[RMDB]
An RNA of 207 nucleotides, treated with 2A3 and DMS and read out base by base.
RNA sequence: GGGAACGACUCGAGUAGAGUCGAAAAGCAUCUACGACGGUCCUGCCAUGAGACCGUAACGAGGACAUGUCGCCUCGAAUGGCGUCGGGGAGCCGGCAGCUUACCCCAAGGAUGAGCGCCUAAUGCCUAUACCCGAUUCGCUUCGGCGAAUCGGGAAGUGUAUUACGUCUUUCGAGACGUAAUACACAAAAGAAACAACAACAACAAC
Reactivity to 2A3 in 0.01 (KOAc 150mM, MgCl2 10mM, bicine 150mM(pH8.5), 24C), signal-to-noise 5, nucleotides 027 to 156: g030c010a060u020c020u130a050c040g130a000c010g010g000u010c010c020u060g180c090c050a190u170g030a080g010a090c010c000g030u020a020a060c010g000a010g000g020a020c040a160u220g030u160c110g010c020c000u020c010g030a090a110u130g010g000c010g010u060c040g000g000g000g010a010g040c040c030g100g010c020a010g020c010u040u180a250c010c000c000c020a030a050g080g010a080u120g040a020g030c020g010c020c030u090a080a060u090g020c000c000u090a080u070a120c010c000c000g000a000u000u000c000g000c000u020u020c060g090g000c000g010a000a010u000c000g000g000g000a000a010
Reactivity to DMS in 0.01 (KOAc 150mM, MgCl2 10mM, bicine 150mM(pH8.5), 24C), signal-to-noise 1, nucleotides 027 to 156: g000c040a110u000c020u000a070c010g020a100c010g000g000u000c010c040u030g040c040c230a080u000g040a070g000a020c010c020g050u020a030a030c070g010a060g010g010a030c030a030u020g030u000c020g060c000c030u030c000g010a100a180u000g040g000c000g040u010c050g020g000g020g020a120g000c020c040g060g020c070a090g010c040u010u000a090c010c020c000c100a080a150g010g020a080u000g010a070g020c040g010c030c000u000a070a100u010g010c030c020u010a090u000a130c020c000c000g000a020u000u010c000g000c030u010u010c300g050g000c000g000a010a000u010c000g020g010g020a000a000

For 2A3, 4,654 sequencing reads were counted.
2A3 adducts were read by reverse transcription with SuperScript II with manganese.
DMS (dimethyl sulfate) methylates the pairing face of unpaired adenines and cytosines.